[RMDB]
RNA sequence: GGGAACGACUCGAGUAGAGUCGAAAACGGAAUACAGUGAGUGGACGGAAGAAAUCCCCUUCCCACCUCCCCACUGUCCACUCACUGUCUUCCUAAUAGGAAAUAUAAAUCGGGGGUGGGAAGGGGACGGCAUCGCUAAUUUCGAUUAGCGAUGCCGAAAAGAAACAACAACAACAAC
Reactivity to 2A3 in 0.01 (KOAc 150mM, MgCl2 10mM, bicine 150mM(pH8.5), 24C), signal-to-noise 1, nucleotides 027 to 126: c020g000g000a010a000u010a000c000a000g000u010g060a020g000u000g010g000a030c040g000g080a090a040g060a130a170a100u030c000c000c000c000u000u000c010c000c000a000c020c000u010c040c010c050c040a100c050u010g000u000c000c000a000c010u000c000a000c000u000g010u000c000u000u000c000c000u040a030a040u090a020g060g100a000a120a000u240a050u050a040a090a030u300c090g010g020g000g030g000u000g000g000g000a000a000g000g000g000g000a000